[RMDB]
Structure probing data (DMS and 2A3) for a 207-nucleotide construct. The data come from the RNA Mapping Database (RMDB), library M2RFPK. The reactions ran in a buffer of 150 mM KOAc, 10 mM MgCl2 and 150 mM bicine (pH 8.5), at 24 C.
RNA sequence: GGGAACGACUCGAGUAGAGUCGAAAACAUGGGGAACUACAUCUGUGUCGCGAGUUCGAUUCUCGCCAGGGCCUGGUCCUGUAGCUCAGUUGGCAGAGCAAGCUGUUCCCCGGACACUUGUCGUCAUAAAAGUUGCCCCCGUUCGCGGGGGCAACAAGUUAUACGCCUAGUUCGCUAGGCGUAUAACAAAAGAAACAACAACAACAAC
Reactivity to DMS in 0.01 (KOAc 150mM, MgCl2 10mM, bicine 150mM(pH8.5), 24C), signal-to-noise 3, nucleotides 027 to 156: c070a120u000g010g020g050g010a040a060c020u000a010c010a110u000c020u020g040u020g020u000c010g000c020g000a030g020u000u000c030g000a300u000u000c000u000c000g030c040c030a100g020g000g000c030c090u000g070g020u000c030c010u000g000u000a040g020c020u020c030a090g020u020u000g010g010c070a070g010a060g010c060a160a250g020c090u010g010u000u000c000c000c010c020g010g000a030c040a070c230u000u020g020u000c000g020u000c020a070u000a050a090a110a150g010u010u000g020c000c000c020c000c000g040u000u000c270g040c040g000g020g050g070g010c000a000a000c000a020a080
Reactivity to 2A3 in 0.01 (KOAc 150mM, MgCl2 10mM, bicine 150mM(pH8.5), 24C), signal-to-noise 1, nucleotides 027 to 156: c030a100u160g000g000g010g030a010a000c030u100a000c120a140u110c020u030g050u030g050u090c000g010c000g010a000g000u030u010c010g000a000u020u020c000u000c010g000c000c010a000g000g000g040c030c300u230g070g020u010c000c000u000g000u010a000g010c000u000c000a010g020u230u140g140g000c070a010g000a000g000c030a020a000g020c020u000g020u020u000c010c000c000c000g010g000a010c010a000c020u080u260g040u050c040g060u020c010a010u070a110a090a020a010g000u000u000g000c000c010c000c030c020g000u040u010c120g030c000g050g090g050g000g000c000a000a000c000a000a000